[RMDB]
Source: RMDB libraries RFM100 and RFMREP, as collected in RNAgym. An RNA of 177 nucleotides, treated with DMS and 2A3 and read out base by base. 2A3 adducts were read by reverse transcription with SuperScript II with manganese.

RNA sequence: GGGAACGACUCGAGUAGAGUCGAAAAUAGGUUCCUCCAGGAGCUGAAAACGAGUCCUUCGGAGGGCGAAGAAACUCAUUAAUUCAUUGAUGAGGGCCCCUCAUUCAAAUGUUAUGCUUCGUGCUUCGAACAAUUUAGACUUCGGUCUAAAUUGUUCAAAAGAAACAACAACAACAAC
Reactivity to DMS in 0.01 (KOAc 150mM, MgCl2 10mM, bicine 150mM(pH8.5), 24C), signal-to-noise 3, nucleotides 027 to 126: u020a260g020g010u000u000c010c010u040c220c230a150g010g020a010g010c000u010g010a060a050a070a050c190g010a110g030u010c010c010u000u000c050g030g010a010g010g000g020c020g010a050a050g000a070a130a100c110u030c060a040u010u010a050a070u030u010c110a090u020u000g000a010u000g000a000g000g010g010c170c140c010c030u010c010a050u000u010c090a030a060a060u020g000u020u010a050u010g000c020u000u000c030g000u020g000c010u000u000c090
Reactivity to 2A3 in 0.01 (KOAc 150mM, MgCl2 10mM, bicine 150mM(pH8.5), 24C), signal-to-noise 5, nucleotides 027 to 126: u090a020g020g030u060u030c000c020u070c100c060a100g020g000a040g010c020u080g070a050a030a000a040c100g040a030g070u030c000c000u020u040c030g020g000a000g000g010g000c010g010a020a010g030a060a080a020c060u060c060a040u090u160a100a160u170u060c040a030u060u060g010a000u010g000a010g010g070g060c010c080c040c030u010c010a090u180u090c040a040a040a030u040g010u120u060a070u160g040c000u010u010c020g000u030g040c000u020u040c050